About this RNA: The record gives the reactivity of an RNA of 177 nucleotides to 2A3 and DMS. Source: RMDB libraries RFM100 and RFMREP, as collected in RNAgym. The reactions ran in a buffer of 150 mM KOAc, 10 mM MgCl2 and 150 mM bicine (pH 8.5), at 24 C. DMS adducts were read by reverse transcription with MarathonRT.

RNA sequence: GGGAACGACUCGAGUAGAGUCGAAAAACGGUGGACUACGGUCCACCGAUCACUCUAGGCACCGCAGCACUGUGCUGGGGAUGUUGCAGCUGCCUGGGAGUGACUACACCUCGCUACGGCGAGGUGAUUGCUAAUCCAUGUUCGCAUGGAUUAGCAAAAAAGAAACAACAACAACAAC
Reactivity to 2A3 in 0.01 (KOAc 150mM, MgCl2 10mM, bicine 150mM(pH8.5), 24C), signal-to-noise 7, nucleotides 027 to 126: a010c010g000g000u010g010g010a010c010u030a060c280g110g000u010c010c000a000c000c000g000a000u000c000a000c000u000c000u000a000g000g000c000a010c020c030g000c010a010g030c000a020c070u140g050u180g190c120u110g040g050g020g040a070u020g000u010u020g000c020a020g000c110u000g000c000c000u020g060g010g000a000g000u000g000a000c010u020a010c000a000c000c000u000c000g000c000u030a040c270g100g000c000g000a000g000g000u000g000a010
Reactivity to DMS in 0.01 (KOAc 150mM, MgCl2 10mM, bicine 150mM(pH8.5), 24C), signal-to-noise 4, nucleotides 027 to 126: a090c010g010g000u000g000g000a010c020u000a100c210g030g010u000c000c000a010c000c000g000a020u000c000a010c000u000c000u000a030g000g000c000a070c060c070g000c000a010g000c020a040c070u010g010u010g030c080u010g000g000g010g000a100u000g010u010u010g000c000a040g030c270u000g000c000c010u010g010g010g000a010g010u000g020a030c110u020a190c000a000c000c000u000c000g020c000u000a110c180g020g010c000g000a010g000g020u000g000a010